Source: RMDB library M2PK50, as collected in RNAgym. Chemical mapping of a 177-nucleotide RNA with 2A3 and DMS. Reactivities are rounded to 0.1 and cut off at 0 and 3. High DMS reactivity at an A or C suggests that its Watson-Crick edge is free. For 2A3 the reverse transcriptase was SuperScript II with manganese. DMS adducts were read by reverse transcription with MarathonRT.
RNA sequence: GGGAACGACUCGAGUAGAGUCGAAAAAGUAUCGGGUUCGCCCGAUACUGUUGGCGCGCGGCCUUUGUCCUGUCGCGCGUAUAUUGCGCGCGAUAUACGGGCAUGUGGGGUCGUUCGCGACCCCAAAUCAAGGAUAACCUUUCGAGGUUAUCCUUGAAAAAGAAACAACAACAACAAC
Reactivity to 2A3 in 0.01 (KOAc 150mM, MgCl2 10mM, bicine 150mM(pH8.5), 24C), signal-to-noise 2, nucleotides 027 to 126: a000g010u000a000u000c010g000g020g050u070u070c210g100c040c000c000g000a000u000a010c010u010g020u010u090g130g000c010g000c010g010c050g040g030c000c000u060u100u040g000u000c010c020u020g010u000c010g000c010g000c000g010u000a050u030a020u080u270g000c010g000c010g010c010g000a000u010a020u030a110c090g010g000g020c040a010u120g110u170g140g020g010g000u020c030g030u040u050c100g000c000g010a050c000c000c010c000a050a060a000
Reactivity to DMS in 0.01 (KOAc 150mM, MgCl2 10mM, bicine 150mM(pH8.5), 24C), signal-to-noise 4, nucleotides 027 to 126: a000g010u000a000u000c000g010g010g020u000u010c240g010c000c000c000g000a000u000a000c000u000g000u000u000g010g010c040g010c080g000c030g000g000c010c020u010u000u000g010u000c010c010u000g010u000c000g010c000g010c000g030u000a020u010a070u010u000g010c010g020c000g010c000g000a010u000a050u020a070c210g020g010g000c010a010u010g030u010g020g000g010g010u000c010g020u000u000c080g010c000g000a050c030c000c000c030a040a030a060